Structure probing data (DMS and 2A3) for a 177-nucleotide construct. The 2A3 profile rests on 1,590 reads. The data come from the RNA Mapping Database (RMDB), library RFM100. The DMS profile rests on 1,940 reads. For DMS the reverse transcriptase was MarathonRT. Reactivities are rounded to 0.1 and cut off at 0 and 3.
RNA sequence: GGGAACGACUCGAGUAGAGUCGAAAACAUGGCGAGCAGAUGGAACCGGGAGACAUGGAGUCCCUGGCCAGUGUGAGUCCUAGCAUUGCAGGAGGGGAGACCCUGGAGGAGAGAGCCCGCCUCAAUUGAAGGCUUCUUAAUUCGUUAAGAAGCCUUCAAAAGAAACAACAACAACAAC
Reactivity to DMS in 0.01 (KOAc 150mM, MgCl2 10mM, bicine 150mM(pH8.5), 24C), signal-to-noise 2, nucleotides 027 to 126: c120a110u020g010g000c020g000a110g040c020a060g000a170u010g000g000a070a140c050c020g020g000g010a070g000a010c090a190u000g050g000a270g000u000c000c000c000u000g010g000c060c020a060g010u000g020u040g030a270g000u020c000c030u040a140g000c080a000u010u020g020c120a040g000g000a120g020g020g000g000a070g000a090c000c020c000u000g030g000a100g000g000a110g000a110g010a090g030c000c000c020g010c040c000u000c040a050a210u000u000
Reactivity to 2A3 in 0.01 (KOAc 150mM, MgCl2 10mM, bicine 150mM(pH8.5), 24C), signal-to-noise 3, nucleotides 027 to 126: c070a090u130g030g000c000g030a020g010c000a000g050a160u040g000g050a060a180c010c030g000g000g020a270g060a020c050a070u290g140g040a110g040u000c010c010c010u020g040g030c030c000a030g000u030g000u000g020a020g010u010c000c010u050a060g030c040a060u030u130g030c040a050g000g110a020g000g030g020g000a040g040a070c000c000c030u040g010g040a040g020g010a080g000a010g000a010g070c040c010c030g010c000c000u050c010a020a200u000u030